[RMDB]
RNA sequence: GGGAACGACUCGAGUAGAGUCGAAAAUUACACUGAGAGCAUUUAGCCUGAUUACUCUUUAAAUCAAAUCAGGCAAUAGUGAGAAACUCGAGAGGUGAAAACCCCACAGCAUUCUGAAAUGUAUUUGAAGGCAACGCUACCUUCGGGUAGCGUUGAAGAUAAUCCUUAACUUCGGUUAAGGAUUAUCAAAAGAAACAACAACAACAAC
Reactivity to 2A3 in 0.01 (KOAc 150mM, MgCl2 10mM, bicine 150mM(pH8.5), 24C), signal-to-noise 2, nucleotides 027 to 156: u120u070a030c010a020c040u100g020a040g000a010g100c010a010u020u030u100a030g030c000c000u000g020a020u030u090a120c010u050c130u140u250u200a100a130a080u130c080a060a010a000u000c000a000g000g000c000a010a010u010a000g000u010g010a080g050a190a140a010c000u020c050g090a090g000a040g120g010u000g010a040a000a000a050c000c000c040c010a020c030a030g030c010a030u130u070c020u160g120a190a140a080u080g030u070a170u080u140u150g080a070a010g040g000c010a000a010c000g000c000u010a000c010c020u010u100c100g050g000g000u010a010g000c000g000u000u000g000a000a000
Reactivity to DMS in 0.01 (KOAc 150mM, MgCl2 10mM, bicine 150mM(pH8.5), 24C), signal-to-noise 1, nucleotides 027 to 156: u000u000a120c050a190c140u000g020a070g010a040g020c000a300u000u000u000a130g000c010c000u000g030a070u000u000a100c130u000c030u050u000u000a100a070a050u010c090a070a150a050u000c010a020g000g020c000a080a040u000a050g000u000g030a300g010a280a100a040c020u000c030g020a130g010a110g000g000u000g000a140a080a070a140c030c000c000c000a110c040a080g050c010a050u000u000c020u000g000a090a070a070u000g000u000a120u010u010u010g000a110a150g030g000c010a000a030c040g000c000u010a010c000c000u000u000c300g030g000g010u000a000g010c010g000u020u000g010a020a050
Description: Source: RMDB library M2RFPK, as collected in RNAgym. Chemical mapping of a 207-nucleotide RNA with 2A3 and DMS. The 2A3 profile rests on 1,220 reads. 2A3 adducts were read by reverse transcription with SuperScript II with manganese. The RNA was probed in 150 mM KOAc, 10 mM MgCl2 and 150 mM bicine (pH 8.5) at 24 C.